[RMDB]
RNA sequence: GGGAACGACUCGAGUAGAGUCGAAAAGAUAUGGAACUCACGGAGGGAGCGAACGAGGGCACUCUCACAUCGGAAACGAUGUGAGUUGCCAGCUCGUUCGCAUCGAUCUCCUGUGAGUUCCUAAGUCCAUCUUAUGGUGGUUCGCCACCAUAAGAUGAAAAGAAACAACAACAACAAC
Reactivity to DMS in 0.01 (KOAc 150mM, MgCl2 10mM, bicine 150mM(pH8.5), 24C), signal-to-noise 4, nucleotides 027 to 126: g010a090u000a300u010g000g000a000a010c000u000c000a030c020g010g000a020g010g000g000a020g030c000g010a010a010c010g010a010g010g010g010c010a040c250u010c000u000c000a000c000a000u000c000g010g000a170a110a300c010g010a000u000g020u010g000a010g000u000u000g000c000c010a100g010c010u000c010g020u020u000c010g020c020a060u000c230g000a040u020c000u000c000c000u010g040u000g010a010g010u010u000c000c000u000a020a080g010u000c050
Reactivity to 2A3 in 0.01 (KOAc 150mM, MgCl2 10mM, bicine 150mM(pH8.5), 24C), signal-to-noise 1, nucleotides 027 to 126: g060a020u160a080u250g000g000a000a000c000u000c000a000c000g000g000a010g020g020g010a020g010c000g000a000a000c020g000a010g000g000g010c000a030c040u180c000u000c030a010c020a000u020c000g040g050a070a100a050c030g000a020u000g000u010g010a000g000u020u010g010c010c020a060g030c000u000c010g000u010u010c010g010c000a010u080c000g010a040u010c010u000c000c050u030g000u000g000a010g000u000u030c000c000u000a010a000g000u000c030

Chemical mapping of a 177-nucleotide RNA with DMS and 2A3. Source: RMDB library TTRINS, as collected in RNAgym. Conditions: 150 mM KOAc, 10 mM MgCl2 and 150 mM bicine (pH 8.5), 24 C. The DMS profile rests on 6,966 reads. 2A3 is a SHAPE reagent: it acylates the 2'-hydroxyl of flexible nucleotides of all four kinds. For DMS the reverse transcriptase was MarathonRT.